[RMDB]
RNA sequence: GGGAACGACUCGAGUAGAGUCGAAAAGUACAUCCCCUUUGGGAACGGUUCCAGAAAUCAAAGCCUCGAGGAUUGCCUGCGAGCAAAUGACCUCACCUUGAGCUGUUGCACUUCGGACAGUGGGCUGUUUCUGAGUGACAUCAACCAUAUAAGCGGACUGAUAAAAUGAUUUCGAUCAUUUUAUCAGAAAAGAAACAACAACAACAAC
Reactivity to DMS in 0.01 (KOAc 150mM, MgCl2 10mM, bicine 150mM(pH8.5), 24C), signal-to-noise 4, nucleotides 027 to 156: g020u000a080c030a180u000c010c010c010c080u000u000u050g030g040g000a080a080c220g000g000u020u010c030c020a110g010a070a060a070u010c040a100a070a060g020c050c010u000c060g010a080g020g010a180u010u000g020c030c000u000g010c160g010a130g020c050a010a040a080u010g000a080c020c010u000c010a180c050c040u000u000g000a100g010c010u000g020u000u000g020c070a090c030u010u000c110g030g020a070c060a080g010u000g010g030g040c010u000g020u000u000u000c030u000g010a140g010u000g000a080c230a080u000c050a060a080c040c020a070u000a110u000a060a080g010c040g000g010a220
Reactivity to 2A3 in 0.01 (KOAc 150mM, MgCl2 10mM, bicine 150mM(pH8.5), 24C), signal-to-noise 6, nucleotides 027 to 156: g070u070a050c020a140u040c010c000c010c010u040u060u110g010g010g010a040a030c030g030g000u100u040c010c010a030g060a030a060a030u150c070a090a100a010g030c030c030u070c110g010a010g020g010a080u010u050g030c020c040u170g100c110g070a180g050c030a020a060a060u150g090a080c010c020u030c030a060c010c030u000u090g030a030g020c020u020g060u110u080g060c060a050c100u120u100c130g060g040a020c020a050g020u070g020g040g000c010u010g010u020u030u000c050u060g030a040g030u070g040a020c010a060u090c030a050a050c030c020a040u080a020u030a180a010g050c080g020g030a030